[RMDB]
RNA sequence: GGGAACGACUCGAGUAGAGUCGAAAAACUCAGGCUGAUACACCAGCUCCCAAAGGUCCCGGAGGCCCUUUGUCCACUGGAGCUGCACAACAAACACUACCACCCUUUCCUGUCCCUCUCUCCCUUUGUUGGGCAAAGGGCUUUGGUGGAGCUAGCACCUAUCAAAGACGUUCGCGUCUUUGAUAGGAAAAGAAACAACAACAACAAC
Reactivity to 2A3 in 0.01 (KOAc 150mM, MgCl2 10mM, bicine 150mM(pH8.5), 24C), signal-to-noise 1, nucleotides 027 to 156: a040c060u090c090a000g080g000c030u050g020a040u110a210c050a070c060c060a030g000c000u050c010c000c000a100a190a020g000g000u030c010c000c040g070g040a030g000g070c020c010c040u040u000u000g010u010c040c000a020c030u080g070g000a000g030c020u040g060c110a070c020a040a100c030a010a170a000c050a050c080u140a080c010c030a060c010c010c000u040u050u050c000c020u060g020u060c020c000c000u010c000u000c020u020c010c000c000u100u130u100g120u160u060g040g010g000c000a000a000a000g000g000g000c000u010u020u010g000g000u040g000g000a000g000c000u020a010g020c000a030
Reactivity to DMS in 0.01 (KOAc 150mM, MgCl2 10mM, bicine 150mM(pH8.5), 24C), signal-to-noise 1, nucleotides 027 to 156: a040c030u000c040a070g010g010c000u000g020a240u020a170c090a140c050c020a070g000c030u010c000c000c010a070a130a130g020g020u000c030c040c070g040g020a140g000g030c000c010c000u010u000u000g020u000c020c040a020c100u000g020g010a060g000c110u000g000c060a190c060a110a090c100a060a100a110c070a100c030u010a050c020c000a080c010c000c020u000u000u000c030c010u000g000u000c000c020c020u000c050u000c010u000c000c020c070u010u000u010g020u010u000g040g030g070c000a000a010a050g010g020g010c020u000u000u000g010g030u000g010g010a140g000c020u000a090g000c140a260
Overview:
This 207-nucleotide RNA was probed chemically with 2A3 and DMS. The 2A3 profile rests on 839 reads. The data come from the RNA Mapping Database (RMDB), library OK3TST. The reactions ran in a buffer of 150 mM KOAc, 10 mM MgCl2 and 150 mM bicine (pH 8.5), at 24 C.